[RMDB]
RNA sequence: GGGAACGACUCGAGUAGAGUCGAAAACAAGCCUUCGUCACUCCAAACGUUUCGGCGAGAAGCAGGCCAUUAUCGCCGGCAUGGCGGCCGACGCGCUGGGCUGGCGUUCGCGACGCGAGGCUGGAUGCCGUUCAUCCCACUUCGGUGGGAUGAACGGAAAAGAAACAACAACAACAAC
Reactivity to 2A3 in 0.01 (KOAc 150mM, MgCl2 10mM, bicine 150mM(pH8.5), 24C), signal-to-noise 1, nucleotides 027 to 126: c020a040a040g000c000c000u000u030c000g020u000c010a020c010u020c020c030a040a070a020c110g020u090u090u060c050g000g000c050g010a020g020a060a000g000c070a010g010g020c000c020a080u210u150a110u200c070g000c030c000g000g080c180a270u140g100g040c000g060g030c030c010g050a080c090g000c000g000c030u010g040g050g000c000u000g040g030c020g020u050u100c060g040c040g110a030c040g030c010g040a000g050g000c000u000g010g040a010u100g060
Reactivity to DMS in 0.01 (KOAc 150mM, MgCl2 10mM, bicine 150mM(pH8.5), 24C), signal-to-noise 1, nucleotides 027 to 126: c050a170a110g010c040c010u030u000c020g040u020c030a070c050u020c080c080a050a040a070c030g020u000u000u020c010g020g010c040g000a050g050a080a140g000c030a130g000g010c020c080a060u010u010a090u010c180g060c030c020g000g000c030a060u000g010g010c170g010g000c040c000g020a030c100g000c050g020c000u000g020g020g010c090u010g000g010c000g010u000u000c130g000c130g040a090c090g050c110g020a040g020g040c000u030g000g000a170u010g010